[RMDB]
RNA sequence: GGGAACGACUCGAGUAGAGUCGAAAAGAGGGCCGCCAGCACAGGAGCCAGAAGCGUGCGCAGUGUCCAGUCCGGCUUAACCGGGCACAGAGAUGAUGCCGUUAGCGUCGCCGGUUCGGUGAGACAGCUCUGAGGUAACUUUCGAGUUACCUCAGAGAAAAGAAACAACAACAACAAC
Reactivity to 2A3 in 0.01 (KOAc 150mM, MgCl2 10mM, bicine 150mM(pH8.5), 24C), signal-to-noise 1, nucleotides 027 to 126: g080a050g000g030g000c020c010g010c000c100a010g050c020a020c020a100g040g100a020g020c010c010a030g040a070a000g010c010g020u060g020c090g000c050a050g020u010g040u130c000c010a010g020u000c000c010g030g030c000u130u110a090a090c010c030g000g030g000c040a040c040a020g090a000g010a050u120g020a060u030g030c000c050g070u050u100a030g020c030g060u060c010g000c000c020g040g000u070u070c030g010g010u050g030a110g020a040c030a020g020
Reactivity to DMS in 0.01 (KOAc 150mM, MgCl2 10mM, bicine 150mM(pH8.5), 24C), signal-to-noise 3, nucleotides 027 to 126: g010a130g010g010g010c050c060g030c040c040a050g010c050a030c100a080g020g010a120g000c050c020a080g000a060a100g030c050g030u000g040c090g010c070a070g010u010g010u010c030c050a120g020u010c030c020g020g000c090u000u020a060a100c040c030g000g000g000c000a050c050a070g000a160g010a080u000g010a070u000g020c020c020g020u000u010a040g000c050g010u000c090g010c060c020g000g010u000u000c060g010g010u000g010a110g000a080c090a120g000